[RMDB]
RNA sequence: GGGAACGACUCGAGUAGAGUCGAAAAAGUGUAGUGCGGCAUCUAGGUGUUACUAAAGGCAUAUUGACAGGCUGUUUUAGUUUUGCCAAGAUGUUAUUUAUGCUUCCACUAGCUUACUUUAGUGAUUAUCCGGAACACUUCGGUGUUCCGAAAAGAAACAACAACAACAAC
Reactivity to 2A3 in 0.01 (KOAc 150mM, MgCl2 10mM, bicine 150mM(pH8.5), 24C), signal-to-noise 6, nucleotides 027 to 129: a010g010u040g000u010a030g010u050g070c050g020g000c000a000u000c010u030a050g000g030u020g030u040u020a000c000u010a000a010a020g050g000c030a050u100a090u130u120g110a080c080a060g110g000c010u010g140u090u000u020u000a020g000u010u000u080u040g010c010c000a010a000g020a010u010g010u050u010a070u030u120u020a050u080g010c000u070u040c020c010a020c020u010a010g030c030u070u070a100c000u120u170u130a040g020u010g070a070u120u090a080u150c060